[RMDB]
RNA sequence: GGGAACGACUCGAGUAGAGUCGAAAAGGGCAUUGACUGGUUAAAAACUUGUGUAUCCCGGGAAGGACCUGCGGUACAGGAGUCAGCCAUGUCUGUGCUGUGUGGAACCACCUGAUGACAUGGUUAAGCUGAUUAACCUGUUCGCAGGUUAAUCAGCAAAAGAAACAACAACAACAAC
Reactivity to 2A3 in 0.01 (KOAc 150mM, MgCl2 10mM, bicine 150mM(pH8.5), 24C), signal-to-noise 2, nucleotides 027 to 126: g040g030g010c010a030u030u060g030a060c030u050g040g050u070u040a070a080a030a050a090c070u100u050g080u000g040u150a060u080c020c030c000g010g000g020a080a040g100g050a060c010c010u000g010c020g040g020u060a000c000a000g010g020a000g030u030c010a010g000c020c000a020u030g030u070c050u000g120u030g040c100u010g060u030g000u040g080g060a080a080c040c040a020c000c000u050g120a090u070g000a000c010a040u050g020g000u030u060a050a010
Reactivity to DMS in 0.01 (KOAc 150mM, MgCl2 10mM, bicine 150mM(pH8.5), 24C), signal-to-noise 3, nucleotides 027 to 126: g010g000g020c100a060u000u000g000a060c030u010g020g000u000u000a080a050a090a190a080c040u000u000g010u000g010u000a080u000c010c030c020g000g060g000a140a160g030g020a050c000c000u000g020c080g010g000u010a000c010a000g020g010a070g010u000c030a050g020c010c000a010u000g000u000c000u000g000u010g000c160u010g010u000g010u000g010g010a130a160c140c010a000c020c030u010g000a070u000g010a050c040a040u000g000g010u000u020a060a130
Conditions: 150 mM KOAc, 10 mM MgCl2 and 150 mM bicine (pH 8.5), 24 C. Structure probing data (2A3 and DMS) for a 177-nucleotide construct. It was measured as part of the RMDB library OK2TRN.